The record gives the reactivity of an RNA of 177 nucleotides to 2A3.
Conditions: 150 mM KOAc, 10 mM MgCl2 and 150 mM bicine (pH 8.5), 24 C.
RNA sequence: GGGAACGACUCGAGUAGAGUCGAAAAUUUGGUGCACCGACUUUGGAUUUUGCGACUACACGGGGGUUGUACUCAAGCUUCAGUACUCGCUUGCGUAGUCCCUCGAAGAAACUCAGCAGCCGGUCACGGUAAAUCGGCGUUUCGACGCCGAUUUACCAAAAGAAACAACAACAACAAC
Reactivity to 2A3 in 0.01 (KOAc 150mM, MgCl2 10mM, bicine 150mM(pH8.5), 24C), signal-to-noise 1, nucleotides 027 to 126: u070u000u070g060g010u000g020c030a020c020c010g040a030c040u110u060u180g070g000a030u040u050u000u210g080c030g020a040c070u020a050c020a000c030g000g000g000g010g000u090u220g160u000a000c010u030c080a020a000g000c060u300u180c040a150g000u100a090c020u020c090g000c000u020u010g000c020g000u020a000g150u010c000c000c000u000c000g020a020a020g070a000a010a000c000u000c100a020g000c010a000g000c040c000g150g000u070c010a000c090
Source information: Reactivities are given for positions 27 through 126. It was measured as part of the RMDB library OK1LIB.